The data come from the RNA Mapping Database (RMDB), library RNAMAK. This 207-nucleotide RNA was probed chemically with DMS and 2A3. For 2A3 the reverse transcriptase was SuperScript II with manganese. Conditions: 150 mM KOAc, 10 mM MgCl2 and 150 mM bicine (pH 8.5), 24 C.
[RMDB]
RNA sequence: GGGAACGACUCGAGUAGAGUCGAAAACGCUGGGUCUCGUCUCAUCACGCAAUGACGUACUGAAGCGCGCACGGUAUAAGACAGCGUGGGACGAGGACCUGUGCUGAAGCGCGCACGGCAACCGAAAGGUGCGAAAAGAUCGUUGUUCGCAACGAUCCAUACAGGAUGGGUUCGCCCAUCCUGUAUGAAAAGAAACAACAACAACAAC
Reactivity to DMS in 0.01 (KOAc 150mM, MgCl2 10mM, bicine 150mM(pH8.5), 24C), signal-to-noise 3, nucleotides 027 to 156: c060g020c030u000g000g000g030u000c000u000c010g050u010c030u010c080a220u000c130a200c070g020c030a160a160u030g040a050c050g020u000a030c040u000g010a030a030g030c010g040c010g050c020a300c030g020g010u000a040u000a030a180g020a210c030a090g030c030g020u010g000g000g030a020c000g010a040g020g000a010c000c000u010g010u000g010c020u000g000a090a040g040c020g030c010g020c020a300c030g000g030c000a140a060c040c020g010a150a120a130g020g010u000g030c000g010a090a090a140a160g010a030u000c000g000u000u000g030u000u000c180g020c000a010a050c000g000a090u000c010
Reactivity to 2A3 in 0.01 (KOAc 150mM, MgCl2 10mM, bicine 150mM(pH8.5), 24C), signal-to-noise 9, nucleotides 027 to 156: c020g000c010u020g010g000g010u010c000u000c000g030u000c020u010c030a190u230c080a060c080g070c070a140a300u280g050a070c040g000u000a000c010u040g070a250a070g000c000g000c000g000c010a000c010g010g020u010a030u030a090a120g160a170c140a090g050c070g060u050g000g010g000a010c000g010a040g040g030a020c000c010u010g010u010g000c010u030g020a140a050g010c010g000c000g000c010a010c010g000g000c000a010a020c000c010g040a090a030a010g000g010u020g010c020g030a090a060a000a040g010a010u010c010g000u000u010g030u060u090c220g000c130a000a010c000g000a000u000c000